[RMDB]
RNA sequence: GGGAACGACUCGAGUAGAGUCGAAAAGCUGGAGAGUCUGGUCUAAAUGGGGUGGCCUCCAGGAAUCCCAGGGACCAUCCCUGGCCCUCUCAUCUGCAGCCUCUCCGGAGGCUGGUGCCUGGAUGGGCCCCUUUUUAACGUUCGCGUUAAAAAGGGGAAAAGAAACAACAACAACAAC
Reactivity to DMS in 0.01 (KOAc 150mM, MgCl2 10mM, bicine 150mM(pH8.5), 24C), signal-to-noise 1, nucleotides 027 to 126: g010c040u010g010g000a080g000a100g020u020c060u000g020g030u020c030u000a060a100a140u010g020g000g030g010u000g000g000c030c010u000c010c020a000g000g000a140a140u010c110c000c010a180g030g000g000a090c030c070a070u000c010c000c110u000g000g000c010c040c050u000c050u020c040a050u010c070u000g000c000a000g010c010c000u000c000u010c270c160g010g000a010g010g020c000u000g000g020u010g020c100c050u010g000g000a010u000g000g000g000
An RNA of 177 nucleotides, treated with DMS and read out base by base.
It was measured as part of the RMDB library OK2TST.
The RNA was probed in 150 mM KOAc, 10 mM MgCl2 and 150 mM bicine (pH 8.5) at 24 C.
DMS adducts were read by reverse transcription with MarathonRT.